RNA sequence: GGGAACGACUCGAGUAGAGUCGAAAAGAUAUGGAUCCAAAAGACGCAAUUGUACACCAACAGCGUGUUGUGUCGGAAACGACACAUCACGACAUGGUGAACAAUUGCGUCUUUUGGAUCCUAAGUCGAAUAUCGUAUCCUUCGGGAUACGAUAUUCAAAAGAAACAACAACAACAAC
Reactivity to DMS in 0.01 (KOAc 150mM, MgCl2 10mM, bicine 150mM(pH8.5), 24C), signal-to-noise 2, nucleotides 027 to 126: g020a020u010a300u020g020g000a000u010c000c000a030a020a000a010g010a000c000g020c010a000a000u010u000g030u000a110c000a000c020c000a070a100c300a220g000c010g040u000g020u000u000g010u010g010u000c000g020g010a130a120a210c000g000a020c000a010c000a000u000c000a010c010g020a050c140a270u000g040g030u000g030a100a000c000a000a000u000u000g000c010g020u000c000u000u000u000u030g000g010a000u000c000c000u000a000a030g000u000c090
An RNA of 177 nucleotides, treated with DMS and read out base by base. The DMS profile rests on 1,871 reads. Reactivities are rounded to 0.1 and cut off at 0 and 3.